[RMDB]
RNA sequence: GGGAACGACUCGAGUAGAGUCGAAAAGAAAGUACCUUUUUUACAGCGCCUAGUUGAAGCUGGCUUCUUAUCACAUUGUAAUUGCAAUGCAGAUAAAACUUAAGCGUAGUCAGAGGAGCUUAAUAAGGCUAAACAUUGGAUUCGUCCAAUGUUUAGCAAAAGAAACAACAACAACAAC
Reactivity to 2A3 in 0.01 (KOAc 150mM, MgCl2 10mM, bicine 150mM(pH8.5), 24C), signal-to-noise 7, nucleotides 027 to 126: g160a000a070a000g030u160a120c000c000u030u000u010u000u080u160a140c130a030g000c010g010c010c010u120a060g030u070u150g080a110a040g010c010u010g040g000c000u070u020c000u010u060a050u020c020a020c000a040u010u030g040u120a250a300u170u210g040c010a020a000u000g010c040a030g010a030u030a030a030a010a000c090u160u130a080a000g020c010g060u020a020g020u020c030a000g000a010g070g040a020g000c000u020u000a070a020u090a170a020g070
Reactivity to DMS in 0.01 (KOAc 150mM, MgCl2 10mM, bicine 150mM(pH8.5), 24C), signal-to-noise 3, nucleotides 027 to 126: g000a060a080a050g020u010a120c000c010u000u010u020u010u000u020a040c160a080g000c000g000c020c010u010a050g030u010u000g030a120a160g010c010u020g000g000c060u000u010c120u000u020a020u000c000a300c020a010u000u000g000u030a140a110u020u040g010c020a010a010u000g000c140a040g010a000u000a010a000a130a090c130u020u010a060a110g010c040g010u010a060g010u010c070a090g010a060g000g000a200g000c010u000u010a010a060u040a030a030g000